[RMDB]
RNA sequence: GGGAACGACUCGAGUAGAGUCGAAAAUAGAAAGUCUUCGGGCCCUAGCCAUGGCGGCGAGCUAUGGGUAGGCGGCGCAAAGCGAUCUCCGGCUACUGGAAUAACCUCGUCGCUACCGCUGAUGCGACGGUAAAUGCACGUUCGCGUGCAUUUACCGAAAAGAAACAACAACAACAAC
Reactivity to 2A3 in 0.01 (KOAc 150mM, MgCl2 10mM, bicine 150mM(pH8.5), 24C), signal-to-noise 2, nucleotides 027 to 126: u130a000g120a010a140a020g060u000c020u010u010c010g040g060g000c000c000c000u030a030g040c000c020a070u100g000g000c000g000g030c040g000a020g000c030u070a060u130g050g010g000u010a010g010g040c020g020g000c020g000c050a180a240a040g030c030g070a120u080c070u010c090c000g080g000c020u030a000c010u030g080g090a190a050u050a040a020c020c020u010c010g000u000c020g020c020u030a050c050c020g000c060u020g010a060u080g070c070g020a030
Reactivity to DMS in 0.01 (KOAc 150mM, MgCl2 10mM, bicine 150mM(pH8.5), 24C), signal-to-noise 2, nucleotides 027 to 126: u010a080g000a190a090a100g020u000c040u000u010c050g010g000g000c030c020c010u000a010g030c070c050a130u000g000g000c010g000g020c040g000a120g000c060u000a020u010g010g000g010u010a020g000g010c060g000g020c190g040c090a070a110a130g030c070g010a110u010c070u000c040c020g020g000c000u000a030c030u000g030g020a100a070u010a040a110c280c000u000c030g000u000c010g010c000u010a110c130c150g000c050u020g010a120u000g010c070g000a130